RNA sequence: GGGAACGACUCGAGUAGAGUCGAAAAAGCGCCUUCAGAGGGAGAAACUCGGAGAAGCAACUGUCACGUUCUCCGAGUCUCUCUCCAGGAGACUGGAGAGUGAGAGUCUGAGAAAAUGACAGUUGAUUCUCAGAAUCUCUCACUCUCUGAAGGCGCACGUUGCUUGAAUGUUCGCAUUCAAGCAACGAAAAGAAACAACAACAACAAC
Reactivity to 2A3 in 0.01 (KOAc 150mM, MgCl2 10mM, bicine 150mM(pH8.5), 24C), signal-to-noise 2, nucleotides 027 to 156: a000g000c000g000c000c010u000u000c000a000g010a010g000g050g000a020g040a080a130a020c010u010c010g050g000a000g010a040a040g060c050a050a090c060u140g070u170c050a040c150g050u050u000c010u000c010c000g010a000g000u000c000u010c000u010c000u000c000c000a000g000g010a080g020a020c000u000g000g000a000g000a000g000u070g030a010g000a000g050u050c000u000g000a010g010a020a060a020a030u110g080a060c010a040g060u070u090g010a070u080u000c000u000c000a010g020a030a040u060c000u030c010u010c020a030c010u050c010u000c000u010g000a000a000g000g010c000g010c000a000
Source information:
Chemical mapping of a 207-nucleotide RNA with 2A3. Values cover nucleotides 27 to 156. The 2A3 profile rests on 1,269 reads. The reactions ran in a buffer of 150 mM KOAc, 10 mM MgCl2 and 150 mM bicine (pH 8.5), at 24 C.